The record gives the reactivity of an RNA of 207 nucleotides to 2A3. The reactions ran in a buffer of 150 mM KOAc, 10 mM MgCl2 and 150 mM bicine (pH 8.5), at 24 C. Reactivities are rounded to 0.1 and cut off at 0 and 3. It was measured as part of the RMDB library RSTRND.
RNA sequence: GGGAACGACUCGAGUAGAGUCGAAAACCUAAAGCUCGAUUCUACCAACCAGCCGGGGAAACUUGUCUGGGGCCGAUGUUAACAGCAUUGGGUAUGGUAACAACGAAGAGAGAUAUGCUGGCUUGCCAGCGAAAUGGGUAAUCCGCAGCCAAGUCCCGUGAAUACCUUUGUUCGCAAAGGUAUUCACAAAAGAAACAACAACAACAAC
Reactivity to 2A3 in 0.01 (KOAc 150mM, MgCl2 10mM, bicine 150mM(pH8.5), 24C), signal-to-noise 2, nucleotides 027 to 156: c000c000u040a090a120a040g030c000u000c020g010a020u030u000c010u000a000c000c010a020a010c010c000a010g010c040c010g010g020g010g000a040a060a030c000u030u040g030u030c020u010g000g050g030g000c000c000g010a000u010g060u220u040a050a040c030a040g000c000a000u020u020g010g000g000u140a300u200g010g000u000a010a020c000a010a000c110g010a000a000g010a000g000a000g000a000u000a030u190g010c030u020g000g000c040u130u160g070c020c010a030g000c020g020a040a070a050u150g050g000g000u020a030a030u060c040c040g000c040a020g020c020c020a050a000g060u040c000c030c020